Source: RMDB library OK1LIB, as collected in RNAgym. Chemical mapping of a 177-nucleotide RNA with 2A3. Reactivities are given for positions 27 through 126. Conditions: 150 mM KOAc, 10 mM MgCl2 and 150 mM bicine (pH 8.5), 24 C. For 2A3, 445 sequencing reads were counted.
[RMDB]
RNA sequence: GGGAACGACUCGAGUAGAGUCGAAAAUUAAACAUAUUAUCAACAUACAGUGUAGUUAAUUAAUCUUUUAAUUCAUAAGCUAUAUACUUAUUGGCUACGUUUAUACAGCUUAGGCCAUAAAAGAUUAGAUAGGCUGGAAGUUCGCUUCCAGCCUAUCAAAAGAAACAACAACAACAAC
Reactivity to 2A3 in 0.01 (KOAc 150mM, MgCl2 10mM, bicine 150mM(pH8.5), 24C), signal-to-noise 2, nucleotides 027 to 126: u040u020a060a120a000c120a000u230a070u150u270a120u290c110a080a230c010a010u300a090c040a010g050u040g010u100a140g020u140u000a080a020u180u000a020a020u140c000u000u030u080u170a100a200u300u130c010a070u050a080a020g000c000u000a000u000a030u010a300c020u030u010a010u000u220g070g000c000u000a010c050g000u000u000u100a260u010a030c130a000g000c000u050u160a030g060g000c000c100a040u120a000a020a000a000g000a000u030u000a000